[RMDB]
RNA sequence: GGGAACGACUCGAGUAGAGUCGAAAACGUGUCCGUCGGCGUAGCCGACAACAUGCCCAGGUAGCCCAGACCUUCAAGGCUACGGUGCGUUGCGACGCACGGUCUGAUUCUUCACAACGACGUUCGCAAGAUCGGAUCACUUUCGAGUGAUCCGAAACAUGGAAAAUCUUUUCGAAGAUUUUCCAUGAAAAGAAACAACAACAACAAC
Reactivity to 2A3 in 0.01 (KOAc 150mM, MgCl2 10mM, bicine 150mM(pH8.5), 24C), signal-to-noise 5, nucleotides 027 to 156: c050g020u010g000u070c120c110g000u010c000g000g020c270g170u230a060g010c000c000g030a000c000a000a000c010a010u070g030c000c010c030a030g030g010u000a000g000c010c040c190a030g010a010c010c000u020u000c030a010a000g000g000c000u000a000c010g000g000u010g000c000g020u050u050g010c040g030a010c000g000c000a000c010g000g000u010c000u000g020a050u090u110c060u150u170c080a060c030a240a130c110g160a030c100g130u050u010c010g020c050a050a030g000a200u020c000g000g000a000u000c000a000c000u030u070u070c110g040a000g010u000g000a000u010c000c000g000a000a000a000
Reactivity to DMS in 0.01 (KOAc 150mM, MgCl2 10mM, bicine 150mM(pH8.5), 24C), signal-to-noise 1, nucleotides 027 to 156: c040g010u010g010u000c030c120g000u000c030g020g020c010g060u000a210g020c010c000g010a030c020a020a010c000a040u000g000c040c040c000a130g020g020u000a050g000c030c010c120a160g000a140c080c060u000u000c100a070a250g000g000c000u000a010c010g010g010u000g040c050g000u010u000g010c080g010a090c020g020c030a050c010g010g020u000c030u010g020a230u000u000c080u000u000c060a080c080a060a120c020g000a080c040g000u000u000c030g000c010a060a090g000a110u000c000g010g000a020u000c000a000c010u000u000u010c300g000a060g030u000g020a010u000c000c010g000a010a010a080
The record gives the reactivity of an RNA of 207 nucleotides to 2A3 and DMS. The RNA was probed in 150 mM KOAc, 10 mM MgCl2 and 150 mM bicine (pH 8.5) at 24 C. 2A3 adducts were read by reverse transcription with SuperScript II with manganese. For DMS the reverse transcriptase was MarathonRT.